RNA sequence: GGGAACGACUCGAGUAGAGUCGAAAAGGGGUCCUGUGUGGGUAGGUGGAGAACAUACCUGAAGCCUCCACGGGUAUGAGUUCGUUGAAACCUACCGUAACAUCACAGGACGGAGGCACCCAAAAGACUUAUGUGAGGUUCGCCUCACAUAAGUCAACUAUUAUCAGCCCUUCGGGGCUGAUAAUAGAAAAGAAACAACAACAACAAC
Reactivity to 2A3 in 0.01 (KOAc 150mM, MgCl2 10mM, bicine 150mM(pH8.5), 24C), signal-to-noise 1, nucleotides 027 to 156: g060g030g000g000u020c000c000u000g020u000g010u030g040g020g020u020a020g000g000u030g040g110a080g010a020a000c000a000u000a020c000c000u000g030a070a040g000c000c010u000c000c000a010c030g000g000g020u010a000u070g160a200g160u010u040c110g080u200u090g060a100a030a000c020c000u020a020c000c000g000u000a000a020c020a030u150c010a000c000a000g000g000a000c030g010g000a000g000g020c010a060c030c010c000a030a040a000a040g000a000c000u030u040a030u010g000u010g010a000g030g000u060u130c240g120c020c000u000c010a010c000a000u010a000a000g000u000c000a000a000

The data come from the RNA Mapping Database (RMDB), library RNAMAK. The record gives the reactivity of an RNA of 207 nucleotides to 2A3. Values cover nucleotides 27 to 156.